RNA sequence: GGGAACGACUCGAGUAGAGUCGAAAAACUAUGCAUCUACGGAUGCAUAGAUCAAACGGUAUUCCAGAGUUGAUAAUAAAAAUGCGUCAGUCCGCAAUCUAUUAUUGCUCGAGAAUACCCUUUGAAAAAAAGUAUGUUGGUUCGCCAACAUACUUUUAAAAGAAACAACAACAACAAC
Reactivity to DMS in 0.01 (KOAc 150mM, MgCl2 10mM, bicine 150mM(pH8.5), 24C), signal-to-noise 6, nucleotides 027 to 126: a180c010u000a000u000g010c000a000u000c000u000a110c170g030g000a010u000g000c000a000u000a010g010a130u010c010a000a010a000c300g000g010u000a010u000u010c000c110a300g010a010g000u000u040g040a010u000a010a010u010a010a040a060a100a140u010g010c000g010u010c170a140g010u020c280c000g000c000a030a120u020c150u000a000u000u000a000u000u000g000c000u000c000g000a300g000a020a000u000a000c000c000c040u000u000u000g000a000a000a060
Reactivity to 2A3 in 0.01 (KOAc 150mM, MgCl2 10mM, bicine 150mM(pH8.5), 24C), signal-to-noise 8, nucleotides 027 to 126: a000c000u000a000u000g000c000a000u000c000u020a050c270g130g000a000u000g000c000a000u000a000g000a010u000c000a000a010a000c010g000g000u000a000u000u000c010c020a020g000a000g010u170u300g070a010u000a010a000u010a010a070a060a030a060u040g010c010g040u100c100a130g090u110c090c010g000c010a010a020u030c030u030a000u010u000a000u000u010g000c000u000c010g030a070g000a040a000u000a000c000c000c000u020u020u040g090a080a040a010